[RMDB]
RNA sequence: GGGAACGACUCGAGUAGAGUCGAAAAGCAUCCCGCUUCGGCGGGAUGCAAAAGCGAUCGUGUCAUUGCCUCGAACGCAACUCAUAUAAUGAUGGGCAGUCAAAAGUCUGGGCUUCGGCCCAGACAAGAAUGCUCAUGAGUUCGCUCAUGAGCAUUCAAAAGAAACAACAACAACAAC
Reactivity to 2A3 in 0.01 (KOAc 150mM, MgCl2 10mM, bicine 150mM(pH8.5), 24C), signal-to-noise 2, nucleotides 027 to 126: g000c000a030u000c010c020c040g040c010u030u060c150g080g000c010g040g010g000a000u010g000c010a000a010a000a000g020c020g000a060u010c020g000u010g160u190c110a210u060u300g060c020c020u030c030g010a010a010c010g000c000a010a090c030u020c050a050u090a020u040a290a160u210g110a020u060g000g080g030c040a020g070u030c000a020a040a070a080g010u000c000u000g000g010g020c000u050u050c190g100g000c010c020c000a000g000a000c000a000a000
Reactivity to DMS in 0.01 (KOAc 150mM, MgCl2 10mM, bicine 150mM(pH8.5), 24C), signal-to-noise 1, nucleotides 027 to 126: g020c000a000u000c010c000c010g000c000u000u010c210g010g020c020g010g060g010a000u020g040c000a010a000a100a150g030c030g010a020u000c030g010u020g020u000c030a090u010u000g000c080c020u000c050g030a030a110c020g010c010a110a050c010u020c010a100u000a040u010a080a070u000g000a020u010g000g010g000c040a070g010u020c110a040a100a130a110g010u000c020u000g000g020g010c000u000u000c180g000g000c000c000c000a010g000a000c000a040a070